RNA sequence: GGGAACGACUCGAGUAGAGUCGAAAAGUCUGUCUGAGCAUGAAGCUGGUUAUUGGUGUUGCUUCUGCAGCUGCCAUUAGCCAUUGAUGAUCGCUCUUCUCUUCUUUCGGGAGAGUGAGAGGGAGAGUGACUGAGAUAGCUUCGGCUAUCUCAGUCAAAAAGAAACAACAACAACAAC
Reactivity to 2A3 in 0.01 (KOAc 150mM, MgCl2 10mM, bicine 150mM(pH8.5), 24C), signal-to-noise 3, nucleotides 027 to 126: g040u030c030u070g040u040c030u090g050a020g010c070a140u150g080a080a030g060c050u020g000g000u000u020a000u010u000g010g010u010g070u250u030g010c020u120u180c050u300g000c000a000g000c010u140g020c000c000a000u020u010a000g000c030c010a020u050u110g080a100u060g010a020u050c040g000c070u020c000u030u000c000u020c010u050u040c030u070u140u120c110g080g000g000a030g000a010g030u130g040a010g000a010g000g060g000a000g000a000g080
Reactivity to DMS in 0.01 (KOAc 150mM, MgCl2 10mM, bicine 150mM(pH8.5), 24C), signal-to-noise 1, nucleotides 027 to 126: g030u000c050u000g010u000c110u040g000a120g040c000a090u070g000a120a100g000c150u010g010g010u000u000a020u030u000g010g050u000g000u000u000g010c000u050u070c120u040g010c000a000g000c030u060g000c030c020a000u000u000a000g010c030c040a070u000u050g020a020u020g000a120u000c020g000c000u000c010u000u020c030u010c000u000u030c000u000u070u000c210g000g030g000a030g020a000g000u000g020a030g000a020g000g010g000a010g000a070g000